[RMDB]
RNA sequence: GGGAACGACUCGAGUAGAGUCGAAAACCACUCCGCAUUCAUUGAGUGUGGAAGUUGUGGUAAUGAUUCCUGGCUUACAGGGAAUGCUAUCCAAGGGUUUGCCUGUGGAUGUGGGGCAUCAUAUACAGUAGUAUUCGCUUCGGCGAAUACAAAAGAAACAACAACAACAAC
Reactivity to DMS in 0.01 (KOAc 150mM, MgCl2 10mM, bicine 150mM(pH8.5), 24C), signal-to-noise 2, nucleotides 027 to 129: c020c010a190c090u020c000c000g100c020a020u000u000c040a200u000u000g020a080g050u030g020u020g030g020a020a050g010u090u060g030u060g000g000u020a060a050u030g030a110u000u000c040c010u040g010g060c030u030u090a040c100a000g000g000g000a050a040u040g080c000u020a100u040c120c170a110a100g000g000g000u000u010u050g040c020c020u020g060u060g010g030a060u040g030u030g050g030g000g020c120a080u020c080a050u000a070u010a100c000a040g030u070a000
Reactivity to 2A3 in 0.01 (KOAc 150mM, MgCl2 10mM, bicine 150mM(pH8.5), 24C), signal-to-noise 2, nucleotides 027 to 129: c000c000a020c030u010c010c000g000c000a020u000u040c010a030u070u300g000a000g010u000g000u010g010g040a020a040g020u070u080g070u020g030g030u080a070a100u100g060a020u010u000c000c000u000g080g020c020u110u130a040c060a010g050g000g000a000a010u060g110c040u050a100u110c070c070a060a080g060g050g000u050u090u100g020c060c000u050g000u020g070g050a070u090g030u050g070g010g000g010c020a010u010c020a020u150a010u020a120c050a010g150u180a000
The record gives the reactivity of an RNA of 170 nucleotides to DMS and 2A3. High DMS reactivity at an A or C suggests that its Watson-Crick edge is free. Source: RMDB library 15KLIB, as collected in RNAgym.